Structure probing data (DMS and 2A3) for a 207-nucleotide construct. For 2A3, 4,231 sequencing reads were counted. The DMS profile rests on 5,481 reads. Reactivities are rounded to 0.1 and cut off at 0 and 3.

[RMDB]
RNA sequence: GGGAACGACUCGAGUAGAGUCGAAAAGUCGGAAAAGGAAGAGAAGGGAAGACUGGAUGUAAUCAGAUGUGGUGGGGCUUCCACACGCAGACGGCAACAUCCUAGCCGACUGCUGGGGAUUAUUAUGGCCCUCAGGUACAGCAGGCCUAAACAGGGGCGUAUGAGGAAAUUUCGAUUUCCUCAUACGAAAAGAAACAACAACAACAAC
Reactivity to DMS in 0.01 (KOAc 150mM, MgCl2 10mM, bicine 150mM(pH8.5), 24C), signal-to-noise 3, nucleotides 027 to 156: g020u000c030g020g000a110a050a080a070g030g000a050a040g030a100g000a110a080g030g000g010a080a050g000a090c090u000g010g000a090u000g030u000a080a070u010c060a070g010a090u000g020u010g020g010u000g020g020g040g030c040u000u000c000c000a010c030a040c120g010c070a050g010a140c020g010g010c000a050a100c110a110u000c070c030u010a210g020c000c010g010a080c020u000g030c010u010g010g000g020g000a170u000u000a100u000u000a070u010g020g020c000c010c000u000c020a030g010g020u000a020c040a090g000c080a090g000g000c010c030u000a080a050a080c060a070g020g030g000g000
Reactivity to 2A3 in 0.01 (KOAc 150mM, MgCl2 10mM, bicine 150mM(pH8.5), 24C), signal-to-noise 5, nucleotides 027 to 156: g030u020c000g030g020a030a050a040a070g030g020a020a020g020a020g020a070a030g030g010g010a020a030g050a050c070u040g020g020a030u060g050u130a120a080u120c090a060g050a160u060g050u050g030g050u070g010g020g010g010c000u070u050c010c020a050c010a020c110g010c000a010g010a040c000g000g010c010a070a030c010a130u150c020c040u030a040g000c000c000g030a030c000u010g000c010u000g020g010g000g000a000u010u070a060u140u070a080u290g040g000c000c000c010u010c030a020g000g030u090a090c010a010g040c010a010g020g020c000c030u080a140a080a020c040a040g000g020g010g000